[RMDB]
Record summary:
Structure probing data (DMS) for a 177-nucleotide construct. The reactions ran in a buffer of 150 mM KOAc, 10 mM MgCl2 and 150 mM bicine (pH 8.5), at 24 C. Source: RMDB library OK2TST, as collected in RNAgym. Reactivities are rounded to 0.1 and cut off at 0 and 3.
RNA sequence: GGGAACGACUCGAGUAGAGUCGAAAAGACUACAGGCAUGAGACAUCAUGUCUGACUGAUUUCUGGACCCAUUUUUGUAGAGCUGGAGUUUCGCUAUAUUGCCCAGGCUGGUCUCAAAUUCCUAGGCCGCUGUAUCCCGUUUCGACGGGAUACAGCGAAAAGAAACAACAACAACAAC
Reactivity to DMS in 0.01 (KOAc 150mM, MgCl2 10mM, bicine 150mM(pH8.5), 24C), signal-to-noise 1, nucleotides 027 to 126: g000a040c070u000a120c040a000g000g000c000a000u030g010a060g000a270c300a090u000c000a030u000g000u000c000u000g000a130c170u000g000a100u010u010u000c010u000g020g000a130c000c030c010a120u000u000u000u020u020g000u000a030g010a130g030c070u000g000g010a130g010u010u030u000c050g010c080u000a080u000a030u020u000g000c020c040c040a020g010g020c170u030g000g010u000c010u000c040a060a060a190u000u000c040c010u000a070g020g000c060